[RMDB]
RNA sequence: GGGAACGACUCGAGUAGAGUCGAAAAGAUAUGGACCGUCUACACAUCAUCGAUCUCGGAAACGAGGGAGAUGAGUAGAGCGGUCCUAAGUCAAACUCUGCCUUAGUCUUCGGACUAAGGCAGAGAAGAUCCCAUAAUCGUUCGCGAUUAUGGGAUCAAAAGAAACAACAACAACAAC
Reactivity to DMS in 0.01 (KOAc 150mM, MgCl2 10mM, bicine 150mM(pH8.5), 24C), signal-to-noise 3, nucleotides 027 to 126: g000a030u000a210u010g010g000a010c010c000g000u000c010u010a000c010a180c180a300u010c000a060u000c010g010a300u020c000u000c010g000g000a080a050a070c000g010a030g000g000g000a290g000a000u000g030a030g010u000a010g000a070g010c010g000g010u000c000c000u000a020a050g010u000c030a100a080a160c010u000c000u000g000c000c000u000u000a000g010u000c000u000u010c180g040g020a010c000u000a000a000g000g000c000a000g000a010g000a050a100
Reactivity to 2A3 in 0.01 (KOAc 150mM, MgCl2 10mM, bicine 150mM(pH8.5), 24C), signal-to-noise 2, nucleotides 027 to 126: g020a010u040a030u100g000g000a020c000c000g000u000c010u030a020c060a010c010a300u280c000a010u010c020g010a030u030c000u000c000g010g020a050a030a040c000g000a010g000g000g000a070g000a010u000g010a000g000u000a000g030a050g050c000g000g000u000c000c000u000a000a000g000u000c020a010a020a140c000u010c000u010g020c000c000u010u000a000g000u010c010u010u110c300g150g000a020c000u000a010a000g010g010c000a000g000a000g000a000a000
This 177-nucleotide RNA was probed chemically with DMS and 2A3. For DMS, 2,234 sequencing reads were counted. Reactivities are given for positions 27 through 126.